The data come from the RNA Mapping Database (RMDB), library PDB130. Chemical mapping of a 207-nucleotide RNA with 2A3 and DMS. For DMS, 2,657 sequencing reads were counted. Conditions: 150 mM KOAc, 10 mM MgCl2 and 150 mM bicine (pH 8.5), 24 C.
[RMDB]
RNA sequence: GGGAACGACUCGAGUAGAGUCGAAAAUCUAGUUUGACAUUGUGAAGAGACAUAGAGGGUGUAGAAUAAGUGGGAGCUUCGGCGCCAGUGAAAUACCACUACCUUUAUAGUUUCUUUACUAUUGUCAGGUGGGGAGUAAAGUUACCACAGGGAUAAUAGAUUUAUGUAGGUUCGCCUACAUAAAUCUAAAAGAAACAACAACAACAAC
Reactivity to 2A3 in 0.01 (KOAc 150mM, MgCl2 10mM, bicine 150mM(pH8.5), 24C), signal-to-noise 2, nucleotides 027 to 156: u020c010u020a010g040u040u120u050g000a000c000a000u010u040g000u000g000a000a000g000a000g000a000c000a010u000a000g000a000g030g020g010u100g030u070a020g100a260a060u020a050a000g030u010g010g030g000a090g000c000u030u030c160g120g000c020g000c000c020a030g030u000g020a000a020a000u020a010c010c010a000c020u020a010c000c000u040u060u060a040u010a040g010u000u000u000c000u010u000u010a000c000u000a020u010u060g000u000c010a010g000g010u080g000g060g020g000a040g030u170a080a160a050g020u060u060a060c020c020a060c000a030g120g020g010a050u120a200a050u030
Reactivity to DMS in 0.01 (KOAc 150mM, MgCl2 10mM, bicine 150mM(pH8.5), 24C), signal-to-noise 1, nucleotides 027 to 156: u000c060u000a220g010u000u000u010g030a040c030a030u000u050g020u010g000a000a030g000a020g020a050c050a060u000a050g000a040g000g010g020u000g050u000a120g020a110a130u000a120a160g040u000g000g000g000a080g050c000u000u010c300g040g030c000g010c030c040a050g020u000g020a110a100a210u000a060c020c020a020c020u000a120c000c000u000u010u000a020u000a150g020u000u010u000c060u000u000u000a040c010u010a030u000u000g020u000c020a040g010g000u010g010g020g020g020a010g010u000a070a050a120g000u000u000a020c010c020a020c030a040g000g000g020a050u000a060a240u010